[RMDB]
RNA sequence: GGGAACGACUCGAGUAGAGUCGAAAAAGAAGACGGCAACACCUGCAACUGAGGAAGCUGGAACACCCCAGCUCCUUUGGGCCCAGAAUUCAUGGACCAUGCAGUUCACAUUUCAAUAUCCUCAGUGUAACAUCAAAGCAUUCGUGCUUUGAUGUUAAAAAGAAACAACAACAACAAC
Reactivity to DMS in 0.01 (KOAc 150mM, MgCl2 10mM, bicine 150mM(pH8.5), 24C), signal-to-noise 3, nucleotides 027 to 126: a130g000a130a100g000a140c080g030g010c010a060a040c060a120c140c020u000g010c060a110a300c070u000g000a000g000g010a070a080g000c040u000g000g000a140a100c170a120c250c120c000c000a030g010c010u000c020c000u000u000u000g020g020g020c040c030c010a060g030a070a080u030u000c130a090u000g010g000a030c020c010a110u010g000c030a030g000u000u000c080a080c100a070u000u000u000c020a030a070u000a110u000c010c000u000c160a060g000u000g000
Reactivity to 2A3 in 0.01 (KOAc 150mM, MgCl2 10mM, bicine 150mM(pH8.5), 24C), signal-to-noise 3, nucleotides 027 to 126: a010g080a040a020g090a010c050g020g020c010a040a020c020a060c050c020u010g000c030a060a020c100u020g000a000g020g010a170a020g000c020u010g000g030a120a100c070a150c100c090c000c010a000g000c000u010c000c000u040u020u010g030g000g010c020c020c000a050g100a050a170u260u170c070a050u130g000g010a000c000c020a010u030g000c010a000g020u080u080c050a040c030a110u030u110u060c080a120a100u050a050u140c010c010u010c030a050g050u030g050
The record gives the reactivity of an RNA of 177 nucleotides to DMS and 2A3. 2A3 adducts were read by reverse transcription with SuperScript II with manganese. In probing experiments dimethyl sulfate is read out at A N1 and C N3, which are open when not base-paired. Conditions: 150 mM KOAc, 10 mM MgCl2 and 150 mM bicine (pH 8.5), 24 C. The data come from the RNA Mapping Database (RMDB), library OK2TST. Reactivities are given for positions 27 through 126.